[RMDB]
RNA sequence: GGGAACGACUCGAGUAGAGUCGAAAACGUUAGCUGGCAGACAAUCCAGUCCCCAUCCCACGGCAACUGUGGAUGGGACUGGCUUUCUGCGCUCUUCAGAUCUCUGAAAAGAGUUGGUGCAUUCGCAAGUUUGUAUUAACUUCGGUUAAUACAAACUAAAAGAAACAACAACAACAAC
Reactivity to DMS in 0.01 (KOAc 150mM, MgCl2 10mM, bicine 150mM(pH8.5), 24C), signal-to-noise 4, nucleotides 027 to 126: c110g000u010u000a080g020c060u000g010g020c000a020g000a040c300a040a010u000c000c000a010g000u000c080c030c010c050a020u000c050c020c020a060c240g000g030c260a070a090c130u010g050u010g010g000a020u000g000g000g000a010c010u000g000g010c140u010u000u000c000u000g010c020g020c000u000c030u000u000c030a050g020a190u000c140u000c000u010g000a040a050a080a060g000a040g000u000u000g010g010u000g000c060a160u010u000c050g000c180a120